[RMDB]
Conditions: 150 mM KOAc, 10 mM MgCl2 and 150 mM bicine (pH 8.5), 24 C. Chemical mapping of a 177-nucleotide RNA with 2A3 and DMS. Reactivities are given for positions 27 through 126. For 2A3 the reverse transcriptase was SuperScript II with manganese. For 2A3, 8,286 sequencing reads were counted.
RNA sequence: GGGAACGACUCGAGUAGAGUCGAAAACUGGCAGGUUCCGGCCUUCACUCUCGGCGGUGAAGCCACCGACAUCGUGGUGAUGCGCAUUAUGUGUCGUCGCGGCUUCGAAAUGGACUUUGCUGAACUGAGGGUAUAUUAACUUCGGUUAAUAUACCCUAAAAGAAACAACAACAACAAC
Reactivity to 2A3 in 0.01 (KOAc 150mM, MgCl2 10mM, bicine 150mM(pH8.5), 24C), signal-to-noise 5, nucleotides 027 to 126: c030u020g020g010c020a000g010g000u080u040c010c040g030g000c020c000u020u030c020a030c010u030c010u090c120g270g010c070g000g030u010g020a010a000g020c000c000a030c030c010g020a020c010a030u060c010g010u010g040g020u020g010a030u050g000c040g010c090a120u110u160a150u300g010u000g010u010c000g000u010c020g000c000g030g000c000u010u010c010g050a100a110a110u170g010g000a020c020u160u170u090g010c010u030g040a140a060c060u060g060
Reactivity to DMS in 0.01 (KOAc 150mM, MgCl2 10mM, bicine 150mM(pH8.5), 24C), signal-to-noise 7, nucleotides 027 to 126: c080u010g010g010c040a030g000g010u000u000c020c140g010g020c110c030u000u000c040a040c040u000c040u010c180g010g030c110g000g000u010g000a010a020g010c020c010a140c150c010g000a050c090a030u010c040g030u010g000g010u000g000a040u000g010c040g010c280a120u010u010a060u010g030u000g020u000c010g000u000c030g020c020g000g000c260u000u000c020g000a050a070a120u010g000g000a030c020u000u010u010g020c010u000g000a100a120c160u010g000